Structure probing data (DMS and 2A3) for a 177-nucleotide construct. For 2A3 the reverse transcriptase was SuperScript II with manganese. It was measured as part of the RMDB library OK1LIB.
[RMDB]
RNA sequence: GGGAACGACUCGAGUAGAGUCGAAAACAGUAUACUGCCACUUGUGUGAGAAUACUUUUAGUACAAGCGAGUACACGCAGUAUACUGCCACUUGUGUGAGAAUACUUUUAGUACAAGCGAGUACACGCAUACUCUAAGGGUUCGCCCUUAGAGUAUGAAAAGAAACAACAACAACAAC
Reactivity to DMS in 0.01 (KOAc 150mM, MgCl2 10mM, bicine 150mM(pH8.5), 24C), signal-to-noise 8, nucleotides 027 to 126: c010a010g010u010a000u000a000c000u010g000c000c170a040c040u010u010g000u030g000u020g000a120g000a140a110u010a020c040u000u030u010u050a090g030u010a000c030a080a260g000c010g000a110g000u020a050c090a150c300g010c020a010g000u010a020u000a010c000u000g000c030c020a080c140u010u010g010u010g010u000g000a090g000a110a070u020a030c060u000u010u020u040a110g010u000a030c060a050a160g020c160g000a190g010u000a020c050a110c170g010
Reactivity to 2A3 in 0.01 (KOAc 150mM, MgCl2 10mM, bicine 150mM(pH8.5), 24C), signal-to-noise 9, nucleotides 027 to 126: c010a000g000u000a000u000a000c000u010g010c010c010a040c030u020u030g020u020g020u060g120a140g120a160a060u090a090c000u060u140u140u300a070g000u030a010c020a080a030g010c020g040a010g040u120a040c070a010c090g000c000a000g000u000a000u000a000c000u010g020c000c000a060c020u070u080g020u010g010u030g090a070g070a110a080u140a160c010u030u070u080u130a080g030u040a030c030a070a040g060c070g080a040g040u030a020c040a000c050g050